The record gives the reactivity of an RNA of 207 nucleotides to 2A3 and DMS. The DMS profile rests on 2,211 reads. For 2A3, 1,557 sequencing reads were counted. Conditions: 150 mM KOAc, 10 mM MgCl2 and 150 mM bicine (pH 8.5), 24 C.
[RMDB]
RNA sequence: GGGAACGACUCGAGUAGAGUCGAAAACAAAGGCAAGCGUACUCUUUUCUAGAAUUCAUUUCAUAUUUCCUUCUCCCUACUUUUAGCAGCCUAUAAAGUAACUAGAAUUACAGGGGCAAAGGGGUAGAAAGCAUACCUACUAUCAUUGGGAGGCCAGGUCUGUAAAGCAAUUCGUUGCUUUACAGACAAAAGAAACAACAACAACAAC
Reactivity to 2A3 in 0.01 (KOAc 150mM, MgCl2 10mM, bicine 150mM(pH8.5), 24C), signal-to-noise 3, nucleotides 027 to 156: c020a000a120a010g050g010c050a050a050g000c030g160u100a050c070u040c040u040u100u100u060c030u080a060g060a090a140u180u020c020a040u020u100u100c050a040u090a130u140u120u030c030c000u020u050c020u040c020c000c000u020a090c040u130u010u030u030a050g010c080a020g010c000c010u120a150u140a200a090a000g020u010a020a040c040u010a090g020a010a000u010u000a030c020a020g020g000g000g010c000a030a010a010g050g040g000g000u010a020g010a040a100a000g010c030a030u020a090c000c010u030a030c010u040a090u140c040a070u040u100g000g020g000a010g010g030c030c030a030g000
Reactivity to DMS in 0.01 (KOAc 150mM, MgCl2 10mM, bicine 150mM(pH8.5), 24C), signal-to-noise 1, nucleotides 027 to 156: c050a030a110a140g000g020c070a030a050g020c060g030u000a070c020u000c030u000u000u000u000c010u030a170g010a100a170u000u000c030a050u010u010u000c000a060u000a120u010u000u000c000c000u000u000c080u010c010c010c010u010a070c080u010u000u020u000a110g030c010a230g030c070c040u000a120u000a140a070a070g010u000a090a090c070u010a150g010a060a110u000u010a040c060a080g000g060g000g050c040a050a020a060g070g010g020g060u000a070g010a080a040a080g010c010a140u000a030c030c000u000a080c050u000a070u000c040a250u010u000g010g010g010a000g010g030c080c030a100g010